About this RNA
An RNA of 177 nucleotides, treated with 2A3 and DMS and read out base by base. DMS adducts were read by reverse transcription with MarathonRT. Conditions: 150 mM KOAc, 10 mM MgCl2 and 150 mM bicine (pH 8.5), 24 C.
RNA sequence: GGGAACGACUCGAGUAGAGUCGAAAAGUCGCCGCGUCGACAUCAACGCCCAGCGCGGGCGAGGGAUGCGUCCUACGGGGGUGACCCAUUCGCCGGCAUGGCAGAGGACGGCAAGAUUGCCGCGACGACCUAAUACGGAUUUCGAUCCGUAUUAGGUAAAAGAAACAACAACAACAAC
Reactivity to 2A3 in 0.01 (KOAc 150mM, MgCl2 10mM, bicine 150mM(pH8.5), 24C), signal-to-noise 9, nucleotides 027 to 126: g010u010c000g000c010c010g000c010g010u020c010g010a050c000a030u020c010a030a070c010g010c000c010c010a100g180c300g030c150g140g000g000c000g000a080g050g140g000a010u040g060c010g020u010c000c010u050a150c100g040g000g020g000g060u140g080a100c000c000c020a070u160u160c060g000c000c000g100g200c210a190u210g030g000c010a020g010a020g070g020a010c020g000g020c010a030a030g040a070u180u300g020c000c020g000c000g010a010c010g010
Reactivity to DMS in 0.01 (KOAc 150mM, MgCl2 10mM, bicine 150mM(pH8.5), 24C), signal-to-noise 9, nucleotides 027 to 126: g020u000c010g030c010c240g010c020g010u000c020g010a290c050a030u000c030a100a080c030g010c010c000c010a190g030c200g010c220g010g010g010c000g000a040g010g000g010a030u000g010c020g010u000c010c000u000a120c150g020g000g000g000g020u010g000a210c010c010c000a200u010u000c120g010c000c000g010g010c140a090u010g010g020c020a190g000a070g000g000a040c010g000g000c140a070a130g000a050u000u010g050c000c180g010c010g010a040c050g010